The data come from the RNA Mapping Database (RMDB), library 15KREP. The record gives the reactivity of an RNA of 177 nucleotides to 2A3 and DMS. The 2A3 profile rests on 1,806 reads. 2A3 adducts were read by reverse transcription with SuperScript II with manganese. Conditions: 150 mM KOAc, 10 mM MgCl2 and 150 mM bicine (pH 8.5), 24 C.

[RMDB]
RNA sequence: GGGAACGACUCGAGUAGAGUCGAAAAGUCAAAUGUAAGGGUUUAAAUAAACCUUUCGUGAAGGACAAUGUCAGUUUCGUUGCUGAUGAUUCAGGUACUCCCGUUGUUGAGUAUCUGUCUAAAGAAGGAUACCGUAAUUCUUCGGAAUUACGGUAUCAAAAGAAACAACAACAACAAC
Reactivity to 2A3 in 0.01 (KOAc 150mM, MgCl2 10mM, bicine 150mM(pH8.5), 24C), signal-to-noise 1, nucleotides 027 to 126: g010u020c000a050a020a100u100g100u120a060a060g000g050g020u010u020u090a230a260a120u300a060a070a000c000c000u000u010u000c040g010u040g050a120a030g110g000a010c020a060a120u170g000u040c010a010g000u000u080u190c120g120u190u090g000c000u000g000a010u010g000a000u000u000c000a000g010g000u020a000c000u010c020c010c040g020u020u010g000u000u000g000a000g000u000a010u000c000u000g010u000c030u120a190a130a060g150a100a030g080
Reactivity to DMS in 0.01 (KOAc 150mM, MgCl2 10mM, bicine 150mM(pH8.5), 24C), signal-to-noise 2, nucleotides 027 to 126: g020u000c000a020a160a020u000g000u000a010a020g030g000g000u000u000u000a120a210a130u000a070a020a010c000c000u000u000u000c040g030u010g000a140a150g000g000a020c030a080a120u010g000u000c000a000g000u000u000u000c220g030u010u000g000c000u000g000a040u000g010a050u010u010c020a000g010g010u000a000c020u000c000c090c140g000u000u000g010u000u000g000a010g010u000a000u000c000u000g000u020c040u000a140a100a140g010a140a110g020